[RMDB]
Background: Conditions: 150 mM KOAc, 10 mM MgCl2 and 150 mM bicine (pH 8.5), 24 C. An RNA of 207 nucleotides, treated with 2A3 and read out base by base.

RNA sequence: GGGAACGACUCGAGUAGAGUCGAAAAGUGCCUCGUAGGCCCGGCAUGCCAACCUGAUCCGAAGUUCAAGGUGGUUUCUCUGGCCUUCCAGAGAGAUGCGCGUCGGAAGAACCGACGAACAAACCUUAAAACAAAACGACGUUCGCGUCGUUUUGAAGCUCAGUGAAAGGUUCGCCUUUCACUGAGCAAAAGAAACAACAACAACAAC
Reactivity to 2A3 in 0.01 (KOAc 150mM, MgCl2 10mM, bicine 150mM(pH8.5), 24C), signal-to-noise 1, nucleotides 027 to 156: g050u050g060c060c000u010c070g040u050a040g000g000c000c000c020g040g010c030a040u130g020c000c000a090a110c000c030u040g020a060u040c030c140g180a160a000g040u090u140c090a080a000g020g010u030g020g030u000u050u020c030u040c000u020g000g000c010c090u140u050c010c000a050g010a010g000a020g000a080u140g050c110g000c010g030u000c000g000g010a130a060g010a140a110c010c000g010a000c000g000a040a010c040a030a060a060c010c010u160u240a110a100a030a060c030a000a000a000a010c000g000a000c000g020u030u090c200g000c010g080u020c000g010u000u020u000u010g010a030a010

For 2A3, 567 sequencing reads were counted. It was measured as part of the RMDB library M2RFPK.